Conditions: 150 mM KOAc, 10 mM MgCl2 and 150 mM bicine (pH 8.5), 24 C. Structure probing data (2A3 and DMS) for a 207-nucleotide construct.

RNA sequence: GGGAACGACUCGAGUAGAGUCGAAAAUGUUACUUCGGUAACAAGAUAGGGGUCGGACCGACGAUCUGACACGCUUGGAUUUACACUGAAGCCUCCACGGUGUUGUCAGCGUGGGGGAGGUCCGACGGAGGCACCCGGUGCGGAACUUCGGUUCCAACCACCCUAUGUAAUUCGUUACAUAGGGUGGAAAAGAAACAACAACAACAAC
Reactivity to 2A3 in 0.01 (KOAc 150mM, MgCl2 10mM, bicine 150mM(pH8.5), 24C), signal-to-noise 4, nucleotides 027 to 156: u100g000u010u010a000c020u040u100c240g160g000u000a000a010c010a020a000g110a070u220a080g090g020g030g000u010c030g000g010a000c000c000g060a110c010g050a160u090c120u130g100a040c000a000c010g030c050u140u210g160g030a180u230u230u230a040c040a000c010u020g060a080a000g030c010c020u000c010c020a040c000g020g000u010g020u050u170g120u090c120a010g000c000g010u010g040g020g000g020g000a020g000g000u000c000c000g010a000c000g000g000a010g010g020c000a040c020c010c000g040g070u160g070c140g000g000a000a000c000u070u070c200g100g000u000u000c010c000a010a000
Reactivity to DMS in 0.01 (KOAc 150mM, MgCl2 10mM, bicine 150mM(pH8.5), 24C), signal-to-noise 1, nucleotides 027 to 156: u020g010u010u000a000c010u000u010c300g030g000u000a000a020c000a020a080g000a280u000a090g020g010g000g010u000c020g060g020a030c000c000g010a250c150g010a290u020c020u000g020a140c000a010c030g020c010u000u000g050g010a100u000u000u010a110c090a080c010u010g000a070a070g020c000c020u000c000c010a300c000g010g000u000g040u000u010g010u000c030a080g000c020g010u000g000g000g010g000g040a060g020g030u000c000c030g000a090c020g030g010a080g090g050c030a040c080c000c020g000g000u000g000c010g000g010a020a020c020u000u000c260g020g000u000u000c010c010a030a290

Source: RMDB library RNAMAK, as collected in RNAgym. For 2A3 the reverse transcriptase was SuperScript II with manganese.